[RMDB]
RNA sequence: GGGAACGACUCGAGUAGAGUCGAAAAGAUAUGGAGUUAUGGGAGAAAUGCAAAUGAACUACAAUUUAAACUCGGAAACGAGUUUAAUGAUUGCAUUUGCAUUUCGUUGAUCAUAACUCCUAAGUCACUCAAAGGAAAACUUCGGUUUUCCUUUGAGAAAAGAAACAACAACAACAAC
Reactivity to DMS in 0.01 (KOAc 150mM, MgCl2 10mM, bicine 150mM(pH8.5), 24C), signal-to-noise 2, nucleotides 027 to 126: g010a040u000a300u000g000g050a000g000u020u010a000u000g010g010g000a040g010a000a010a000u000g000c000a020a000a010u000g010a040a040c150u000a300c150a110a090u040u000u000a010a000a010c010u000c000g000g000a070a070a220c010g000a010g010u000u000u010a010a010u010g020a100u000u000g000c010a010u000u000u000g020c000a000u000u000u000c010g000u000u000g010a050u020c000a010u000a000a000c000u000c000c000u000a000a070g020u000c020a300